[RMDB]
RNA sequence: GGGAACGACUCGAGUAGAGUCGAAAACGGAUUCGACAGGCAUUAUGAGGCAUAUUUUGCGACUCGUGUGGCGACGUAAACGCUCAGUUAAAUAUAACUGCAAAAAAUAACACUUCUUACGCUCUAGCUGCCUAAAAACCAGCAGGCGUGACCCGAUCGUAUGAGUUUACUUCGGUAAACUCAUACGAAAAGAAACAACAACAACAAC
Reactivity to 2A3 in 0.01 (KOAc 150mM, MgCl2 10mM, bicine 150mM(pH8.5), 24C), signal-to-noise 3, nucleotides 027 to 156: c040g050g010a080u100u080c020g040a010c060a090g030g050c020a040u020u050a060u260g020a040g050g040c030a020u080a120u080u160u110u070g040c020g040a060c010u010c020g000u000g000u010g010g000c000g020a040c030g070u100a050a050a000c020g040c010u000c010a000g010u030u020a090a280a140u270a110u080a130a000c010u030g010c080a000a030a000a000a080a180u160a110a020c050a010c020u080u110c000u050u060a000c000g010c010u040c000u190a040g010c010u010g000c000c000u070a080a050a000a000a000c000c000a000g000c000a000g000g000c010g010u010g020a030c050c010c010g060a070u010